Chemical mapping of a 177-nucleotide RNA with 2A3 and DMS. Conditions: 150 mM KOAc, 10 mM MgCl2 and 150 mM bicine (pH 8.5), 24 C. Source: RMDB library RFM100, as collected in RNAgym. The DMS profile rests on 2,566 reads.
[RMDB]
RNA sequence: GGGAACGACUCGAGUAGAGUCGAAAAGGCGCUUACCCCGUGAGGGGGGCUUGGGGAACCGAGUCUAGCGUUGUUAUAAGAAAUCAAUCUUUUGGAUCCAGCCAGGGUCCUCUAGCAGAAAAGGGGGGCUCCUUAAAUGGUUCGCCAUUUAAGGAGCAAAAGAAACAACAACAACAAC
Reactivity to 2A3 in 0.01 (KOAc 150mM, MgCl2 10mM, bicine 150mM(pH8.5), 24C), signal-to-noise 2, nucleotides 027 to 126: g020g000c000g000c020u080u080a020c000c040c000c020g100u090g090a220g000g000g000g000g000g000c000u000u000g010g010g000g120a020a030c010c000g000a010g010u010c030u030a020g030c020g010u000u030g070u080u130a300u010a140a070g120a060a100a030u140c040a020a070u080c050u040u080u030u040g040g000a010u010c010c010a020g190c110c100a120g010g000g040u020c000c000u000c000u010a050g010c080a000g060a090a030a030a050g000g000g010g010g000
Reactivity to DMS in 0.01 (KOAc 150mM, MgCl2 10mM, bicine 150mM(pH8.5), 24C), signal-to-noise 2, nucleotides 027 to 126: g010g000c000g010c020u020u060a200c000c040c000c010g000u050g000a210g000g000g000g000g010g030c000u000u000g000g000g000g060a150a220c010c000g010a010g020u000c040u010a030g020c000g010u000u000g010u020u010a050u030a070a190g020a070a080a060u050c170a060a100u010c010u000u030u020u000g000g010a040u010c010c060a150g000c210c150a140g020g000g040u000c030c000u000c030u020a010g000c230a190g000a040a030a050a050g010g010g000g000g000